[RMDB]
RNA sequence: GGGAACGACUCGAGUAGAGUCGAAAACGCCUUCCAGAUCAUGGGUUUCCACUGGCAACGCCUGGGCUACAUCAGCGUGCAGGCCUUCGCCGAGGCCAUGGGGCGCAGCGAGUCGGCUCAGUUCGAAGCGUUCGUCCGCUUCAUCGACACCGACCCGGAAACUGAUAGGAUUCGUCCUAUCAGUUUCAAAAGAAACAACAACAACAAC
Reactivity to 2A3 in 0.01 (KOAc 150mM, MgCl2 10mM, bicine 150mM(pH8.5), 24C), signal-to-noise 4, nucleotides 027 to 156: c020g010c010c010u140u100c090c070a080g030a290u170c030a040u050g020g000g040u050u090u050c070c030a070c100u080g020g000c010a040a020c040g000c010c010u000g000g090g000c010u090a050c050a280u180c140a030g040c030g130u180g270c020a020g010g000c000c020u070u040c090g010c010c030g080a020g030g000c010c000a020u040g000g000g010g020c050g000c010a030g070c030g030a040g040u020c000g010g000c020u020c120a060g040u070u090c080g000a020a000g000c010g020u080u130c090g090u170c070c010g000c010u000u010c010a020u030c020g010a000c010a000c040c010g020a020c000c020c000g040
Reactivity to DMS in 0.01 (KOAc 150mM, MgCl2 10mM, bicine 150mM(pH8.5), 24C), signal-to-noise 2, nucleotides 027 to 156: c030g020c000c010u000u000c030c020a150g000a110u010c070a070u000g040g000g020u010u000u020c000c000a200c020u030g010g030c000a030a190c150g010c010c010u060g000g030g000c010u000a050c030a100u010c040a190g000c220g000u010g000c000a060g040g000c000c000u000u000c040g020c100c020g040a300g010g020c010c010a110u010g000g010g040g030c030g010c070a120g000c020g000a090g000u020c000g020g030c060u010c100a250g010u000u000c090g020a020a020g000c000g040u010u010c240g000u000c220c010g020c010u000u010c010a070u000c040g010a210c110a060c010c000g000a100c000c010c030g030

The record gives the reactivity of an RNA of 207 nucleotides to 2A3 and DMS. 2A3 adducts were read by reverse transcription with SuperScript II with manganese. DMS adducts were read by reverse transcription with MarathonRT. The DMS profile rests on 3,455 reads. For 2A3, 4,099 sequencing reads were counted. It was measured as part of the RMDB library OK3TST.